[RMDB]
RNA sequence: GGGAACGACUCGAGUAGAGUCGAAAAACAUAGUUUGGCCGACGUCAUACCAUUGAAGACGAAUCGUUAAAGACACCAGCUCGUCUUAUAGGAGCCCUUUUAGCAAAAACAGUCCUGUAGGAACCAAUCCUAACUGGUAGUUCGCUACCAGUUAGGAAAAAGAAACAACAACAACAAC
Reactivity to DMS in 0.01 (KOAc 150mM, MgCl2 10mM, bicine 150mM(pH8.5), 24C), signal-to-noise 2, nucleotides 027 to 126: a050c050a100u020a020g000u000u000u010g030g030c050c050g020a050c110g020u010c010a160u010a110c080c090a120u020u010g040a130a040g000a050c040g000a050a030u000c050g020u000u010a050a090a130g010a110c070a050c030c130a070g060c070u000c050g000u000c020u000u000a030u000a060g000g010a070g000c050c070c020u000u000u000u000a130g000c070a050a040a070a040a060c120a120g000u000c020c020u000g020u010a010g020g000a080a090c070c110a010a100